[RMDB]
RNA sequence: GGGAACGACUCGAGUAGAGUCGAAAAGAUCAGCUAUAUCAUUGCUGGUCUUGAUGAAGAAUAUGUGCCGGUAAUCUCGUCCAUUGUUGGGCGACCAGAUCAGGUGACCGUCAGUGAGGCCUUUGCUUUACGACGCAUCUUUCGAGAUGCGUCGUAAAAAAGAAACAACAACAACAAC
Reactivity to 2A3 in 0.01 (KOAc 150mM, MgCl2 10mM, bicine 150mM(pH8.5), 24C), signal-to-noise 1, nucleotides 027 to 126: g000a000u020c000a000g000c000u150a090u030a030u300c020a040u090u300g000c000u000g000g000u000c000u000u000g000a000u050g030a000a100g090a130a000u090a000u160g130u190g000c000c000g000g090u070a000a100u080c010u040c000g040u000c000c000a140u060u300g030u160u030g050g030g000c000g000a000c020c000a050g000a130u130c000a030g090g000u000g050a000c010c040g030u090c060a060g010u040g070a040g020g000c000c000u050u000u040g000c000u010
Reactivity to DMS in 0.01 (KOAc 150mM, MgCl2 10mM, bicine 150mM(pH8.5), 24C), signal-to-noise 1, nucleotides 027 to 126: g030a000u000c000a000g100c020u030a030u000a140u040c300a070u000u000g010c000u000g000g010u000c000u000u000g030a130u020g000a000a050g000a110a220u010a000u040g000u010g080c010c010g000g000u000a100a090u000c090u000c030g000u000c050c060a030u000u000g000u030u000g140g000g000c090g000a000c190c020a110g000a040u000c040a100g000g000u000g000a170c030c020g000u010c040a030g000u000g000a070g060g000c010c010u030u000u000g000c070u000

This 177-nucleotide RNA was probed chemically with 2A3 and DMS. The RNA was probed in 150 mM KOAc, 10 mM MgCl2 and 150 mM bicine (pH 8.5) at 24 C. DMS adducts were read by reverse transcription with MarathonRT.